[RMDB]
RNA sequence: GGGAACGACUCGAGUAGAGUCGAAAAUAAUGGUGCUUGCAUUUGGAACGCUGCUGCAUAUAUGAAACUCUCGGAUGCACUUAAACGACAGAUUCGCAUUGCAUGCCGUAAGUGUAAUUUAGCUUUCAGACCAUACUCUUCGGAGUAUGGAAAAGAAACAACAACAACAAC
Reactivity to DMS in 0.01 (KOAc 150mM, MgCl2 10mM, bicine 150mM(pH8.5), 24C), signal-to-noise 9, nucleotides 027 to 129: u040a060a050u020g010g010u020g010c040u050u020g010c010a060u020u040u070g010g010a040a040c130g000c090u040g030c010u040g020c040a040u030a050u010a030u070g000a060a100a040c010u000c090u000c030g020g010a060u040g000c120a030c130u040u040a060a080a140c030g040a060c130a050g000a130u010u030c050g030c110a070u050u010g000c040a060u030g030c020c040g040u030a020a020g010u010g000u000a090a070u040u010u010a090g030c140u030u020u020c000a040g010a290
Reactivity to 2A3 in 0.01 (KOAc 150mM, MgCl2 10mM, bicine 150mM(pH8.5), 24C), signal-to-noise 9, nucleotides 027 to 129: u200a010a070u120g060g000u030g030c020u060u080g020c020a070u050u040u210g100g040a070a020c070g000c060u030g010c010u040g000c050a020u080a000u020a020u160g130a120a060a050c030u050c000u000c030g030g020a020u040g020c020a020c040u070u120a120a150a010c030g060a020c020a070g100a200u170u100c070g000c080a030u020u140g010c020a010u100g150c000c010g030u030a060a040g010u010g030u080a070a140u050u080u090a030g030c060u010u030u020c000a000g010a020